[RMDB]
RNA sequence: GGGAACGACUCGAGUAGAGUCGAAAAACACCAAAACUGAAAACGGAAGGCAAUCCUUCCACGACGAUACUUACUUUCCUUUCAUCGUCGUUACUACUGGCAUAGCCACAAAGGAGAACAAACAUGAGCGCGGACACUGACUUCGGUCAGUGUCCAAUCCAUACGUAGGCUUCGGCCUACGUAUGGAAAAAGAAACAACAACAACAAC
Reactivity to 2A3 in 0.01 (KOAc 150mM, MgCl2 10mM, bicine 150mM(pH8.5), 24C), signal-to-noise 1, nucleotides 027 to 156: a000c070a060c010c030a110a020a130a090c080u220g070a120a040a060a000c070g020g020a000a000g030g010c100a100a140u190c000c010u000u000c000c000a000c000g000a000c000g000a020u030a080c060u160u000a040c040u140u180u020c010c030u010u060u080c030a000u000c000g000u010c000g000u050u010a030c010u010a030c000u010g020g000c030a180u010a110g040c000c000a000c110a040a090a020g080g010a010g010a180a010c030a070a150a000c070a040u110g090a010g080c120g000c070g000g000a000c000a000c010u040g000a000c000u040u020c100g050g000u000c000a000g000u000g010u000c000c000a000a000